[RMDB]
RNA sequence: GGGAACGACUCGAGUAGAGUCGAAAAGAUAUGGAUAUCUCCUCGUGGCAAUGAUGUCGGAAACGAUUGAGCCACACGCGAGGAGAGUAUCCUAAGUCAAACUCCCUUCCCUUCGGGGAAGGGAGAAGACUGACAUCUUCUUCGGAAGAUGUCAGUCAAAAGAAACAACAACAACAAC
Reactivity to DMS in 0.01 (KOAc 150mM, MgCl2 10mM, bicine 150mM(pH8.5), 24C), signal-to-noise 2, nucleotides 027 to 126: g020a030u020a280u000g010g000a000u000a030u000c000u000c000c000u000c000g010u000g000g000c000a140a140u010g010a080u000g000u000c010g000g000a080a100a170c010g000a010u000u000g010a140g000c020c000a050c120a060c260g020c180g020a010g050g000a010g000a010g000u000a000u000c000c000u020a020a090g000u010c020a160a060a200c000u000c010c000c010u000u010c000c000c000u000u000c280g030g010g000g010a010a010g000g000g000a000g020a030a020
Reactivity to 2A3 in 0.01 (KOAc 150mM, MgCl2 10mM, bicine 150mM(pH8.5), 24C), signal-to-noise 2, nucleotides 027 to 126: g000a020u100a040u130g000g000a000u010a020u000c000u000c000c020u010c030g040u180g050g000c040a170a300u190g040a040u140g080u000c020g000g040a080a080a040c040g000a010u030u100g030a000g100c040c000a030c000a020c080g220c150g030a000g020g010a000g020a010g000u010a000u000c010c010u000a090a010g040u000c020a000a010a270c010u040c000c010c000u000u000c040c000c040u040u050c300g090g020g020g000a000a000g010g030g000a000g000a000a000